RNA sequence: GGGAACGACUCGAGUAGAGUCGAAAAUUCGCGGGGUCGAUGUCACCGGUGAGUUUGGAGAGGAUCGCAACGAUGGUGGGGGGAUCGUUGGGAUCGGCGGGCUGGGUGUAGACGAUGCCGCCAUAGGCCACACUUUCUCUUUCGAGAGAAAGUGUGGAAAAGAAACAACAACAACAAC
Reactivity to DMS in 0.01 (KOAc 150mM, MgCl2 10mM, bicine 150mM(pH8.5), 24C), signal-to-noise 2, nucleotides 027 to 126: u060u010c130g040c030g020g010g020g070u020c040g010a090u040g030u000c010a080c060c030g000g020u010g020a160g000u010u000u020g010g010a090g000a140g010g000a020u000c040g000c020a010a020c040g000a020u000g010g040u000g000g000g000g000g000g020a010u020c010g000u000u000g010g000g000a030u010c020g030g000c100g000g010g000c020u000g000g010g010u000g040u010a090g000a050c070g020a080u030g030c000c020g000c070c140a100u050a040g000g000
Reactivity to 2A3 in 0.01 (KOAc 150mM, MgCl2 10mM, bicine 150mM(pH8.5), 24C), signal-to-noise 6, nucleotides 027 to 126: u160u100c040g000c010g000g040g010g020u020c020g040a070u090g090u140c030a010c060c020g050g030u080g020a100g000u070u160u270g090g020a100g000a040g120g010a050u020c030g030c180a020a000c010g040a040u030g030g140u130g030g010g000g000g040g020a010u010c000g020u020u010g010g060g000a020u010c020g010g030c010g000g010g010c020u120g130g000g020u050g010u040a030g020a050c020g020a020u070g090c020c000g000c010c000a070u100a110g120g020